This 177-nucleotide RNA was probed chemically with 2A3 and DMS. The DMS profile rests on 1,188 reads. For DMS the reverse transcriptase was MarathonRT. It was measured as part of the RMDB library OK2TRN. For 2A3 the reverse transcriptase was SuperScript II with manganese. For 2A3, 984 sequencing reads were counted.
[RMDB]
RNA sequence: GGGAACGACUCGAGUAGAGUCGAAAAUCGAGCGAGACGUCGUCGAGCGCGGCGAACUCGCCGAAGCGUUUGUGCAGAUUACGAACGGUGAUGCCCAUCUGGUUUGCCUCUUUACGAAAUCGACGAAAUCGCAUGGGGAUUUCGAUCCCCAUGCGAUAAAAGAAACAACAACAACAAC
Reactivity to 2A3 in 0.01 (KOAc 150mM, MgCl2 10mM, bicine 150mM(pH8.5), 24C), signal-to-noise 1, nucleotides 027 to 126: u020c000g010a010g030c010g000a010g000a040c020g000u000c000g000u000c040g100a070g080c100g000c010g010g000c000g040a120a110c000u010c010g000c000c000g000a030a000g050c020g000u040u070u100g080u020g010c060a020g010a220u140u100a030c000g020a010a000c040g030g020u040g020a070u130g000c000c000c000a070u070c070u050g120g050u030u020u100g040c010c000u090c000u150u070u040a050c030g050a090a050a130u090c020g050a070c070g060a260a000
Reactivity to DMS in 0.01 (KOAc 150mM, MgCl2 10mM, bicine 150mM(pH8.5), 24C), signal-to-noise 2, nucleotides 027 to 126: u000c000g010a150g020c000g000a020g010a300c020g000u000c010g020u000c040g020a160g060c160g000c000g020g000c000g030a110a040c030u010c000g020c010c010g040a070a140g020c040g010u000u010u020g040u000g020c100a220g010a180u020u010a050c040g000a050a060c080g010g010u000g020a090u010g010c060c010c030a140u000c110u030g000g010u010u000u000g000c030c030u000c100u000u010u000a060c140g000a010a090a100u000c030g000a100c080g010a060a080